[RMDB]
RNA sequence: GGGAACGACUCGAGUAGAGUCGAAAAGUGCGGAUUGAAAUUCAUGGGAGCCUCUCCAUAAUGGAUGAACGCCGCGCUAGUCCGCGCAGUCGCGACGUAAACGCUCUGUAUUCCCGUUCAGGCCUCACCAGUAUCAUAUAUUCGUAUAUGAUACUGGAAAAGAAACAACAACAACAAC
Reactivity to DMS in 0.01 (KOAc 150mM, MgCl2 10mM, bicine 150mM(pH8.5), 24C), signal-to-noise 9, nucleotides 027 to 126: g020u000g010c010g000g010a070u000u000g010a180a140a030u000u000c030a010u000g000g010g010a040g010c230c130u010c050u000c000c010a090u000a100a030u000g000g000a020u000g000a120a170c260g000c010c010g010c010g020c010u000a100g010u010c040c040g020c100g010c120a070g010u000c060g020c040g010a040c060g010u010a060a090a110c060g000c020u010c020u000g010u000a160u000u000c010c000c010g020u000u010c090a070g000g000c030c090u000c120a230
Reactivity to 2A3 in 0.01 (KOAc 150mM, MgCl2 10mM, bicine 150mM(pH8.5), 24C), signal-to-noise 9, nucleotides 027 to 126: g010u010g010c000g000g050a130u080u130g060a170a140a040u030u030c020a030u050g020g010g010a020g080c080c060u200c010u000c050c010a060u240a290a030u100g000g020a000u020g030a080a030c060g000c010c000g000c000g000c000u010a030g050u030c030c020g000c020g010c060a040g050u170c040g020c030g040a060c040g050u080a040a130a040c030g000c010u030c010u060g040u040a090u030u020c000c000c010g000u080u090c070a050g000g080c010c020u060c010a050